[RMDB]
RNA sequence: GGGAACGACUCGAGUAGAGUCGAAAAGAUAUGGAAAGCGACGCUACACGAAUUCGGAAACGAACUAUGUAGAACUACGUCAGCUUUCCUAAGUCAAAACCCUCCAGUACUUCGGUACUGGAGGGAAGUGAACUACAAUGUUCGCAUUGUAGUUCACAAAAGAAACAACAACAACAAC
Reactivity to 2A3 in 0.01 (KOAc 150mM, MgCl2 10mM, bicine 150mM(pH8.5), 24C), signal-to-noise 4, nucleotides 027 to 126: g010a010u070a030u120g000g000a010a020a000g000c010g010a000c000g030c020u060a010c030a010c070g230a210a300u040u030c000g010g010a020a060a060c020g000a000a010c040u050a040u140g000u010a000g010a120a070c200u210a020c200g020u000c080a030g020c000u020u000u000c000c010u000a070a010g040u000c020a020a030a040a300c000c000c000u020c010c000a000g000u000a000c010u060u280c300g110g000u000a000c000u000g000g010a000g000g000g000a010a000
Reactivity to DMS in 0.01 (KOAc 150mM, MgCl2 10mM, bicine 150mM(pH8.5), 24C), signal-to-noise 3, nucleotides 027 to 126: g000a060u000a300u010g000g000a000a000a010g010c010g000a010c000g010c010u010a010c020a040c130g000a040a190u010u010c010g020g020a130a090a180c000g000a000a010c070u000a190u000g000u000a010g000a090a040c140u010a300c010g000u010c020a070g040c000u000u000u000c000c000u020a020a090g010u010c030a100a050a120a110c000c000c000u000c000c000a000g010u000a000c000u000u000c140g020g000u000a010c000u000g010g000a010g030g000g010a000a010

An RNA of 177 nucleotides, treated with 2A3 and DMS and read out base by base. Conditions: 150 mM KOAc, 10 mM MgCl2 and 150 mM bicine (pH 8.5), 24 C. Source: RMDB library TTRDEL, as collected in RNAgym. For 2A3 the reverse transcriptase was SuperScript II with manganese.